[RMDB]
RNA sequence: GGGAACGACUCGAGUAGAGUCGAAAAGAGUCUCUCAGUGUCUGUCUGUCAGUGAGUGAGUGACUGACAGUCUGUCAGUCUCAGACACUCAGUCACACUGACAGACUGUCUGAGUCUGACAGAGUGACAGUACGAGUGUCUUCGGACACUCGUACUGAAAAGAAACAACAACAACAAC
Reactivity to DMS in 0.01 (KOAc 150mM, MgCl2 10mM, bicine 150mM(pH8.5), 24C), signal-to-noise 4, nucleotides 027 to 126: g020a140g010u000c020u010c010u010c010a080g000u010g010u000c030u000g010u000c010u000g000u000c000a030g020u000g010a080g020u020g000a110g010u010g010a060c010u000g000a030c020a080g010u010c080u000g010u000c020a000g030u010c040u000c100a060g010a100c050a040c110u000c070a050g020u000c040a130c230a130c160u000g000a010c010a020g000a010c040u000g000u000c010u000g000a040g010u000c050u010g000a020c000a030g020a080g020u010g010a150
Reactivity to 2A3 in 0.01 (KOAc 150mM, MgCl2 10mM, bicine 150mM(pH8.5), 24C), signal-to-noise 2, nucleotides 027 to 126: g050a030g030u010c030u010c010u020c080a040g040u000g130u170c030u040g060u000c000u010g030u010c010a010g050u010g180a130g080u080g060a130g050u100g040a060c010u010g000a000c000a020g140u020c040u010g000u020c000a010g050u000c030u000c080a040g010a040c020a020c070u070c010a030g010u040c000a040c040a020c130u030g010a000c000a000g000a000c010u000g000u000c000u010g000a000g000u020c030u030g000a000c000a000g040a000g030u050g030a010
Conditions: 150 mM KOAc, 10 mM MgCl2 and 150 mM bicine (pH 8.5), 24 C. An RNA of 177 nucleotides, treated with DMS and 2A3 and read out base by base. DMS adducts were read by reverse transcription with MarathonRT.